[RMDB]
RNA sequence: GGGAACGACUCGAGUAGAGUCGAAAAAGAGGUAUACACAAACUGGAAGCGGGAUAUAAAAUGAAAUUUCAAUCAUGAUGCAGUUGUAUACAUGUUCCUGUAAAGGCAAGGACCAUACUGCACCAAAUCUACUAAUAGGUUUCGACCUAUUAGUAGAAAAAGAAACAACAACAACAAC
Reactivity to DMS in 0.01 (KOAc 150mM, MgCl2 10mM, bicine 150mM(pH8.5), 24C), signal-to-noise 9, nucleotides 027 to 126: a070g010a070g010g020u000a020u010a040c040a100c090a100a100a120c080u000g000g010a070a080g020c070g010g000g010a090u010a090u010a050a050a080a060u010g010a050a070a140u010u010u010c100a090a090u010c110a070u000g010a030u000g010c010a020g000u000u000g010u000a050u000a070c090a060u000g000u000u000c000c010u000g010u010a060a100a090g010g010c080a070a050g000g010a070c100c040a030u000a020c010u000g000c010a030c030c030a020a080a120
Reactivity to 2A3 in 0.01 (KOAc 150mM, MgCl2 10mM, bicine 150mM(pH8.5), 24C), signal-to-noise 9, nucleotides 027 to 126: a000g060a020g020g030u040a030u070a050c050a000c020a040a190a030c050u050g040g030a060a020g040c070g030g040g040a030u110a010u080a180a120a040a070u100g060a080a080a070u120u190u090c060a050a060u060c040a060u090g040a020u040g020c010a000g010u060u040g040u090a050u020a050c050a040u060g020u050u040c000c000u020g060u120a150a140a020g120g000c060a040a050g020g010a010c000c000a020u040a060c010u010g000c010a010c010c010a010a090a050